[RMDB]
RNA sequence: GGGAACGACUCGAGUAGAGUCGAAAAGAUAUGGAUCUACCUAGGGAGCGAGGUGGUCGGAAACGACCACUCGCGAGGAUCUAGAGAUCCUAAGUCAAACGCGUUUACACUUCGGUGUAAACGCGAAGAUCAGCGAUUAGUUCGCUAAUCGCUGAUCAAAAGAAACAACAACAACAAC
Reactivity to DMS in 0.01 (KOAc 150mM, MgCl2 10mM, bicine 150mM(pH8.5), 24C), signal-to-noise 1, nucleotides 027 to 126: g000a030u000a080u000g000g000a000u000c000u010a130c300c050u000a020g000g000g000a040g030c000g010a030g000g090u000g030g020u000c000g000g000a000a030a060c000g010a000c010c000a020c010u000c000g050c000g000a030g000g000a030u010c000u000a020g000a030g020a000u000c020c000u000a000a130g000u000c010a090a110a280c020g010c000g000u000u000u000a010c000a020c000u000u010c130g020g030u000g010u000a000a000a000c010g010c000g000a010a030
Reactivity to 2A3 in 0.01 (KOAc 150mM, MgCl2 10mM, bicine 150mM(pH8.5), 24C), signal-to-noise 1, nucleotides 027 to 126: g010a010u030a000u110g000g000a050u090c010u030a260c100c000u020a020g020g030g000a070g020c020g000a020g150g270u110g040g030u020c000g000g000a000a030a010c010g010a000c000c000a020c010u010c000g000c000g040a070g000g000a010u000c030u000a000g000a000g000a050u010c000c010u010a040a000g030u000c050a120a060a120c050g010c000g000u010u010u010a030c010a010c030u060u110c300g200g000u000g000u000a000a000a000c000g040c010g010a010a000
Description
Source: RMDB library TTRDES, as collected in RNAgym. Structure probing data (DMS and 2A3) for a 177-nucleotide construct. The reactions ran in a buffer of 150 mM KOAc, 10 mM MgCl2 and 150 mM bicine (pH 8.5), at 24 C. Values cover nucleotides 27 to 126.